[RMDB]
RNA sequence: GGGAACGACUCGAGUAGAGUCGAAAAGAUAUGGAGAUCACUUCUGAUGACCAAUAGGGAAGCUGCCAGCUUACUCGGAAACGAGUAAGCUGGCAGCGCCUAUUGCAAGGAAGGGAUCUCCUAAGUCCAAUAUCGUUUAGUUCGCUAAACGAUAUUGAAAAGAAACAACAACAACAAC
Reactivity to DMS in 0.01 (KOAc 150mM, MgCl2 10mM, bicine 150mM(pH8.5), 24C), signal-to-noise 2, nucleotides 027 to 126: g010a100u010a300u010g010g010a020g030a010u000c000a040c000u000u000c010u010g020a100u010g000a190c300c020a000a010u000a000g010g000g010a120a210g000c010u000g020c020c000a030g060c000u000u000a000c020u010c000g020g000a100a080a210c000g000a030g030u030a030a030g020c000u000g000g000c000a010g010c000g010c000c000u000a000u000u000g000c040a030a120g000g000a000a000g000g000g000a010u010c000u010c000c010u000a010a080g000u000c060